RNA sequence: GGGAACGACUCGAGUAGAGUCGAAAAGAUAUGGACCGAGCAAUGGGAGGCUUAGCCAUCGGAAACGAUGGUGGGAGCUCAUUGCGUUUGACGUCCUAAGUCGGCUCGUGCCGUUCGCGGCACGAAACACAGUGACUAACUUCGGUUAGUCACUGUGAAAAGAAACAACAACAACAAC
Reactivity to DMS in 0.01 (KOAc 150mM, MgCl2 10mM, bicine 150mM(pH8.5), 24C), signal-to-noise 6, nucleotides 027 to 126: g010a040u010a300u010g000g010a030c000c020g000a080g010c010a010a000u000g000g010g010a090g000g000c000u000u000a300g020c010c000a010u000c000g010g000a150a090a180c010g020a000u000g000g000u000g000g000g010a040g010c000u000c000a010u000u000g000c000g000u000u000u000g020a130c300g000u000c000c000u010a040a130g010u000c010g000g000c120u000c000g010u000g010c000c000g030u000u010c240g020c020g020g000c010a010c010g000a010a040a230
Reactivity to 2A3 in 0.01 (KOAc 150mM, MgCl2 10mM, bicine 150mM(pH8.5), 24C), signal-to-noise 4, nucleotides 027 to 126: g020a010u040a010u150g000g000a000c030c040g050a040g040c010a030a040u080g130g300g120a110g300g000c020u010u010a010g020c000c010a000u000c010g000g040a080a040a020c020g000a010u000g000g000u030g040g110g000a010g000c020u050c050a000u000u010g000c010g020u070u110u210g020a040c020g000u000c000c010u000a110a020g060u030c020g060g000c010u010c020g000u010g000c010c030g020u050u050c300g000c040g070g010c000a010c010g000a000a020a000